[RMDB]
RNA sequence: GGGAACGACUCGAGUAGAGUCGAAAAUACUGAAUUAUAUAAGGAGAGGUAGCAAUGAAAUUAUUUAUUAUUUUAGGUGCAUUAAACGCGAUGAUGGCUGUCGGAACAGGUGCAUUUGGUGCGCAUGACACUUAUCAUGGUUCGCCAUGAUAAGUGUAAAAGAAACAACAACAACAAC
Reactivity to 2A3 in 0.01 (KOAc 150mM, MgCl2 10mM, bicine 150mM(pH8.5), 24C), signal-to-noise 4, nucleotides 027 to 126: u070a000c010u010g060a050a040u250u070a130u110a110u060a250a070g070g000a040g020a010g090g000u040a000g010c030a070a070u170g040a080a080a040u100u050a060u110u160u080a160u090u040a080u020u090u100u030a020g050g000u000g020c020a010u080u090a100a060a040c030g010c010g100a040u060g010a000u060g030g020c020u020g020u070c030g030g000a030a040c040a060g110g000u060g030c000a030u040u020u130g030g010u040g000c040g020c030a020u080g010
Reactivity to DMS in 0.01 (KOAc 150mM, MgCl2 10mM, bicine 150mM(pH8.5), 24C), signal-to-noise 4, nucleotides 027 to 126: u030a090c060u010g000a120a050u040u020a090u070a080u010a110a090g000g000a050g000a070g010g010u010a030g000c060a040a080u020g010a080a050a050u010u030a060u020u010u030a060u020u010a070u030u010u010u010a040g010g010u000g000c030a060u040u000a050a090a060c090g000c050g010a070u000g000a050u000g000g010c050u010g020u010c010g010g010a070a120c100a010g000g030u000g020c020a030u010u030u000g010g010u010g000c040g050c070a060u010g010

This 177-nucleotide RNA was probed chemically with 2A3 and DMS.
The data come from the RNA Mapping Database (RMDB), library OK1LIB.
For DMS, 7,327 sequencing reads were counted.
The RNA was probed in 150 mM KOAc, 10 mM MgCl2 and 150 mM bicine (pH 8.5) at 24 C.